Conditions: 150 mM KOAc, 10 mM MgCl2 and 150 mM bicine (pH 8.5), 24 C. An RNA of 207 nucleotides, treated with 2A3 and DMS and read out base by base.
RNA sequence: GGGAACGACUCGAGUAGAGUCGAAAAAGUCAAAUUGACACCAAUCCUUCAAAGGCGCAUCAAUCCACUUUGCGAAAUCUUCCAGCAUUUCGGCGUUGUAGUUAUCCGCAAUGCAACGACCCCAGGCACGAGCAUUUUUAUAACCGUAGCGGCUAAAAAUCCGUUAUAGAUUCGUCUAUAACGGAUUAAAAGAAACAACAACAACAAC
Reactivity to 2A3 in 0.01 (KOAc 150mM, MgCl2 10mM, bicine 150mM(pH8.5), 24C), signal-to-noise 3, nucleotides 027 to 156: a000g060u050c030a010a090a220u180u190g010a000c010a010c020c010a060a050u090c040c020u120u090c050a120a070a030g060g010c050g010c040a020u020c040a050a120u060c030c040a060c030u070u090u060g020c020g060a060a060a090u020c030u140u050c040c030a040g000c010a080u000u050u120c030g020g010c010g020u000u040g040u060a080g020u070u110a050u130c010c010g020c030a020a020u020g010c000a040a050c020g080a070c010c050c000c050a080g070g000c030a000c070g010a010g010c010a010u050u000u020u080u140a120u140a070a010c020c030g020u020a030g010c010g030g000c070u130a010a060a040
Reactivity to DMS in 0.01 (KOAc 150mM, MgCl2 10mM, bicine 150mM(pH8.5), 24C), signal-to-noise 2, nucleotides 027 to 156: a070g000u000c030a030a070a120u000u010g000a120c030a110c060c020a080a130u000c070c090u010u000c060a040a120a140g010g020c050g020c040a070u000c040a060a110u000c040c080a040c030u000u000u030g000c060g030a050a050a060u000c060u000u010c040c040a210g020c060a150u010u010u030c060g010g000c070g010u010u000g040u010a040g020u010u000a110u000c030c080g040c080a040a040u020g000c010a040a060c030g000a090c010c010c040c040a040g010g030c040a080c090g010a130g040c070a060u020u000u000u010u000a060u000a110a040c010c000g010u000a080g030c060g000g030c020u010a010a040a070
Values cover nucleotides 27 to 156.